Chemical mapping of a 177-nucleotide RNA with 2A3.
The RNA was probed in 150 mM KOAc, 10 mM MgCl2 and 150 mM bicine (pH 8.5) at 24 C.
Source: RMDB library OK1LIB, as collected in RNAgym.

RNA sequence: GGGAACGACUCGAGUAGAGUCGAAAAGGUCCCGUUAUUCUCGAGUGAAUUUUAUCACCCACCAUAUGUUUCAAUCUCUGAUAAAAGCAUGGGGCCAUAAAUAUUUUUGAAGGGAAUACCUCUCCUGCGCUGGGCGAAUGUUCGCAUUCGCCCAGCGAAAAGAAACAACAACAACAAC
Reactivity to 2A3 in 0.01 (KOAc 150mM, MgCl2 10mM, bicine 150mM(pH8.5), 24C), signal-to-noise 1, nucleotides 027 to 126: g080g030u030c070c000c050g030u000u080a060u060u050c070u080c030g020a000g050u100g120a220a160u140u080u080u000a130u120c010a060c000c000c000a040c000c070a050u030a060u150g020u030u110u090c100a060a160u000c030u000c060u200g120a150u050a190a180a000a000g000c000a020u070g060g000g000g010c000c000a000u180a050a000a000u050a210u070u100u060u030u200g130a080a080g000g040g000a000a000u050a200c000c000u000c000u010c000c000u020g000